[RMDB]
RNA sequence: GGGAACGACUCGAGUAGAGUCGAAAAGUAGGGACGUGCGACGGAGUCCCUCAGCGUCAGCCUAACUCUUCGAAAAGAGACCUCCAUCGCACCGCAGUGAUUCUGUGCAAUCUUGCGGCCCAAUCACGACUGCUGGUAGCUUCGGCUACCAGCAGUCAAAAGAAACAACAACAACAAC
Reactivity to 2A3 in 0.01 (KOAc 150mM, MgCl2 10mM, bicine 150mM(pH8.5), 24C), signal-to-noise 2, nucleotides 027 to 126: g130u120a000g000g000g010a070c110g160u190g010c010g000a030c000g020g030a020g020u020c000c000c010u030c050a000g000c000g060u050c010a080g070c000c000u030a130a080c000u000c000u050u120c190g070a030a030a020a030g010a010g010a070c000c030u010c060c000a050u040c000g010c000a000c010c010g000c000a130g080u110g160a000u060u000c030u180g260u210g150c070a000a010u050c000u020u000g000c000g010g000c000c050c000a060a050u160c000a000c190
An RNA of 177 nucleotides, treated with 2A3 and read out base by base. Source: RMDB library RFM100, as collected in RNAgym. The RNA was probed in 150 mM KOAc, 10 mM MgCl2 and 150 mM bicine (pH 8.5) at 24 C.